[RMDB]
An RNA of 207 nucleotides, treated with 2A3 and read out base by base.

RNA sequence: GGGAACGACUCGAGUAGAGUCGAAAAUAAUAAUUGCACCGGUGGUCAAGAAGUUCGUGACCUCCUUUGUGUACAAUCUUUUAAUGGCAUCAAAGUAUUACCUCCUGUGUUGUCAGAGAGUCAGAUCUCUGGCUACACAACCGGUGCUACUGCGGCAGCAGAGAUUUUGCUUCGGCAAAAUCUCUGCAAAAGAAACAACAACAACAAC
Reactivity to 2A3 in 0.01 (KOAc 150mM, MgCl2 10mM, bicine 150mM(pH8.5), 24C), signal-to-noise 1, nucleotides 027 to 156: u080a000a030u050a000a100u140u080g000c010a020c020c000g040g000u030g030g000u000c020a050a010g060a050a100g250u280u300c140g060u190g040a020c000c000u030c040c000u040u020u000g000u010g010u000a120c060a040a110u090c050u080u220u180u210a080a050u120g100g000c030a050u040c010a200a020a010g000u010a100u030u100a050c000c020u120c010c070u000g010u000g000u000u020g010u020c000a000g000a000g000a000g030u030c130a050g020a300u000c000u000c000u000g000g000c000u000a000c010a000c000a020a000c000c010g000g010u000g010c000u000a010c010u020g050c090g010g000c050a010
Source: RMDB library OK3TST, as collected in RNAgym.
The reactions ran in a buffer of 150 mM KOAc, 10 mM MgCl2 and 150 mM bicine (pH 8.5), at 24 C.
Reactivities are given for positions 27 through 156.